[RMDB]
RNA sequence: GGGAACGACUCGAGUAGAGUCGAAAAUGCUGGUCGGGCUUCUCUAGGGAUUGUAGAGAUGCAGUCCCCAGUGUCGCAAAUUAGAUUGUAUAUGGUUACGUGCGACAGAUACUGGUGAGGCGCUCAAGGGUUAAUUAAACUUCGGUUUAAUUAACCCAAAAGAAACAACAACAACAAC
Reactivity to 2A3 in 0.01 (KOAc 150mM, MgCl2 10mM, bicine 150mM(pH8.5), 24C), signal-to-noise 2, nucleotides 027 to 126: u100g000c020u020g020g040u040c050g010g010g000c040u070u000c000u010c020u050a020g090g000g000a000u010u010g010u050a030g000a010g000a050u040g020c000a000g030u000c000c000c000c000a010g010u000g020u000c020g000c000a020a050a020u230u090a070g080a110u060u190g090u060a060u000a020u230g240g040u030u060a010c010g010u060g000c020g010a000c000a030g100a040u250a080c010u010g080g000u110g070a050g050g020c030g020c010u050c050a090a090
Reactivity to DMS in 0.01 (KOAc 150mM, MgCl2 10mM, bicine 150mM(pH8.5), 24C), signal-to-noise 3, nucleotides 027 to 126: u030g010c030u020g000g020u010c090g020g010g020c020u000u010c010u000c000u020a140g020g010g010a030u000u020g010u000a010g020a120g010a170u010g020c000a020g000u000c000c010c000c030a020g010u010g000u000c010g000c010a040a070a070u020u050a090g010a150u010u020g010u010a110u020a080u050g010g010u020u010a060c270g020u000g000c020g010a030c000a150g010a210u000a140c020u000g010g000u010g020a060g000g000c130g010c010u000c010a070a200